[RMDB]
RNA sequence: GGGAACGACUCGAGUAGAGUCGAAAAACAAGCUGCACGUGCGUGCGAGCAGUUUUCGAAAUCGCACGUUUCACGUAAAGACGCAACUCUACUCGAGAAAGCGAGUCAGGCAGACAGCGUCAAGGAACGUCUCGUUCGUAUUCGUACGAACGAGACGAAAAGAAACAACAACAACAAC
Reactivity to DMS in 0.01 (KOAc 150mM, MgCl2 10mM, bicine 150mM(pH8.5), 24C), signal-to-noise 1, nucleotides 027 to 126: a080c270a220a020g010c000u000g060c130a000c000g000u010g000c030g010u000g000c000g030a040g000c100a170g000u000u000u000u000c140g020a090a120a140u000c020g010c040a000c030g020u000u030u000c020a050c120g000u020a070a110a050g000a090c030g000c000a150a040c000u010c000u000a030c000u000c000g010a040g000a040a090a020g000c050g000a110g000u000c040a030g010g000c030a060g020a110c090a070g000c110g000u000c000a040a040g000g020a090a110
Reactivity to 2A3 in 0.01 (KOAc 150mM, MgCl2 10mM, bicine 150mM(pH8.5), 24C), signal-to-noise 1, nucleotides 027 to 126: a000c070a110a000g020c030u020g020c070a010c040g030u020g000c000g000u000g040c010g000a050g100c110a060g000u080u000u190u210c040g030a000a040a090u020c000g000c000a000c010g000u040u170u090c020a010c000g030u060a050a040a080g040a000c010g010c110a000a000c000u000c000u000a000c000u010c000g000a010g020a000a000a000g070c000g020a020g120u040c020a040g050g010c000a000g040a090c060a040g010c000g010u010c030a010a040g060g020a130a020

Description
Source: RMDB library M2PK90, as collected in RNAgym. An RNA of 177 nucleotides, treated with DMS and 2A3 and read out base by base. For 2A3 the reverse transcriptase was SuperScript II with manganese.